[RMDB]
RNA sequence: GGGAACGACUCGAGUAGAGUCGAAAAGAUAUGGACCCUAGGAGGAGUACUCGGAAACGAGUAUACUCCGCGAAACUAGGCGUCCUAAGUCAAAACGCCCGUACGUUGUUCGCAACGUACGGGCGAACUGUUAACUAGUGUUCGCACUAGUUAACAGAAAAGAAACAACAACAACAAC
Reactivity to DMS in 0.01 (KOAc 150mM, MgCl2 10mM, bicine 150mM(pH8.5), 24C), signal-to-noise 2, nucleotides 027 to 126: g000a040u000a300u000g000g020a010c010c000c000u000a000g010g020a140g000g010a050g010u010a040c000u000c000g000g000a080a090a080c010g010a010g010u000a040u000a040c000u000c000c020g010c160g000a090a130a300c040u000a000g000g000c210g030u000c000c000u020a020a120g000u000c080a020a060a110a210c000g000c000c000c000g090u000a000c000g060u000u010g030u010u010c250g020c010a000a000c010g000u020a000c010g010g010g020c000g020a010a010
Reactivity to 2A3 in 0.01 (KOAc 150mM, MgCl2 10mM, bicine 150mM(pH8.5), 24C), signal-to-noise 1, nucleotides 027 to 126: g000a010u080a040u130g000g000a010c000c000c000u010a010g040g040a130g020g010a010g000u010a000c000u010c020g030g040a070a080a040c010g010a020g000u000a020u030a030c010u010c010c000g010c040g030a070a030a020c010u010a000g010g030c130g060u000c000c000u010a110a010g100u040c020a000a000a180a180c030g000c000c030c000g050u020a010c020g000u000u030g110u080u180c280g010c160a020a000c000g000u020a000c000g020g080g010c000g000a010a010